[RMDB]
This 177-nucleotide RNA was probed chemically with DMS and 2A3. The DMS profile rests on 992 reads. High 2A3 reactivity points to a flexible backbone, as in loops and unpaired stretches. The reactions ran in a buffer of 150 mM KOAc, 10 mM MgCl2 and 150 mM bicine (pH 8.5), at 24 C.
RNA sequence: GGGAACGACUCGAGUAGAGUCGAAAAGGCAAUUACUUCGGUAAUUGCCAUAUAUACUUGAGAAAAGAAGGGCGCAACUCAAGAAAAUUGCGAAAUAAACAAACAACGAGAGCUUCGGCUCUCGUAAGUAAGCUAUGAUGUUCGCAUCAUAGCUUACAAAAGAAACAACAACAACAAC
Reactivity to DMS in 0.01 (KOAc 150mM, MgCl2 10mM, bicine 150mM(pH8.5), 24C), signal-to-noise 2, nucleotides 027 to 126: g020g030c010a000a000u000u000a020c000u000u020c140g010g020u000a010a010u010u000g000c000c000a000u000a010u000a150u000a130c030u030u000g010a050g010a100a030a070a150g020a080a070g000g030g030c030g000c060a050a090c020u030c030a010a080g000a100a080a060a110u010u000g000c060g020a060a050a090u010a050a070a050c090a090a140a050c200a070a050c020g010a000g020a000g000c000u000u030c300g000g010c000u000c000u000c000g010u000a000a030
Reactivity to 2A3 in 0.01 (KOAc 150mM, MgCl2 10mM, bicine 150mM(pH8.5), 24C), signal-to-noise 2, nucleotides 027 to 126: g000g000c010a000a010u000u010a000c020u040u090c220g050g000u000a000a000u000u000g000c010c000a000u000a000u000a000u000a000c010u050u030g050a030g060a060a220a060a040g130a040a100g050g050g020c050g000c030a030a020c000u030c030a060a020g050a070a130a050a060u110u130g030c030g070a000a070a110u280a020a120a030c090a040a110a010c030a020a010c000g000a000g000a000g030c010u040u050c240g040g000c000u010c000u000c000g000u000a000a000